Chemical mapping of a 177-nucleotide RNA with DMS and 2A3. Reactivities are given for positions 27 through 126. High DMS reactivity at an A or C suggests that its Watson-Crick edge is free. It was measured as part of the RMDB library TTRDES.
RNA sequence: GGGAACGACUCGAGUAGAGUCGAAAAAAAAGAUAUGGAAUCGGAAUACAGCAACAGCUAUACGUAACAUCGCUCGGAAACGAGCGUGGUAUAGACAUGCUGGAUAAAUCGAUUCCUAAGUCAAAAACCUACCUAUUAGGUUCGCCUAAUAGGUAGGAAAAGAAACAACAACAACAAC
Reactivity to DMS in 0.01 (KOAc 150mM, MgCl2 10mM, bicine 150mM(pH8.5), 24C), signal-to-noise 4, nucleotides 027 to 126: a090a090a050a120g010a040u020a300u010g000g000a010a000u000c000g000g030a130a100u010a080c020a010g010c000a020a070c300a170g000c020u010a000u000a010c030g010u000a050a070c160a020u010c010g000c000u000c020g010g000a100a080a140c010g010a000g020c000g040u000g010g020u000a000u000a000g000a060c080a180u000g020c010u000g000g000a060u000a060a070a070u010c000g000a010u000u000c000c000u000a070a070g000u020c030a050a100a080a100a120
Reactivity to 2A3 in 0.01 (KOAc 150mM, MgCl2 10mM, bicine 150mM(pH8.5), 24C), signal-to-noise 3, nucleotides 027 to 126: a000a000a020a060g080a040u090a050u140g000g010a000a000u000c010g020g070a070a020u140a110c020a010g000c020a040a080c020a250g040c020u010a010u020a030c020g120u100a130a060c040a250u270c030g020c000u010c000g020g050a080a100a080c010g000a000g000c000g000u000g000g000u010a010u010a000g110a080c030a040u080g000c000u000g000g000a030u100a020a160a020u080c000g000a000u000u000c000c000u010a060a020g040u020c030a060a000a060a080a120